[RMDB]
An RNA of 177 nucleotides, treated with DMS and 2A3 and read out base by base.
The reactions ran in a buffer of 150 mM KOAc, 10 mM MgCl2 and 150 mM bicine (pH 8.5), at 24 C.
Source: RMDB library OK2TRN, as collected in RNAgym.
DMS adducts were read by reverse transcription with MarathonRT.
RNA sequence: GGGAACGACUCGAGUAGAGUCGAAAAUCAGACCAGGUCAGCGGAGAGCAGGCGCAUGCAGGGAUGCCGGCAGGCCACAAUGGUCCGGUAGAGGAUACUCGCAGCGCUGAGCUGGCGCGGCUGCUGAGCAGUGAACGUAGUUCGCUACGUUCACUGCAAAAGAAACAACAACAACAAC
Reactivity to DMS in 0.01 (KOAc 150mM, MgCl2 10mM, bicine 150mM(pH8.5), 24C), signal-to-noise 3, nucleotides 027 to 126: u030c070a080g000a140c070c060a260g000g030u000c010a040g020c010g020g010a070g000a060g000c040a300g000g000c010g040c020a080u000g030c020a100g010g000g000a110u000g010c010c020g000g040c300a100g000g010c010c020a130c130a080a120u030g030g010u000c010c040g010g000u000a060g010a150g000g000a110u010a100c000u010c060g040c010a050g010c010g010c010u000g020a050g000c000u010g000g000c020g010c040g000g010c010u020g000c030u020g000a160
Reactivity to 2A3 in 0.01 (KOAc 150mM, MgCl2 10mM, bicine 150mM(pH8.5), 24C), signal-to-noise 2, nucleotides 027 to 126: u120c020a020g110a110c050c020a020g060g080u000c020a050g020c080g150g300a060g010a010g080c080a020g020g000c010g000c040a110u040g000c020a030g000g080g020a040u040g030c010c010g010g000c010a070g110g050c070c010a060c070a110a200u220g030g050u040c010c010g030g000u070a050g010a050g160g060a060u060a160c000u020c010g000c030a010g000c010g000c020u020g020a010g040c000u000g000g000c080g000c000g000g030c000u050g020c020u030g060a020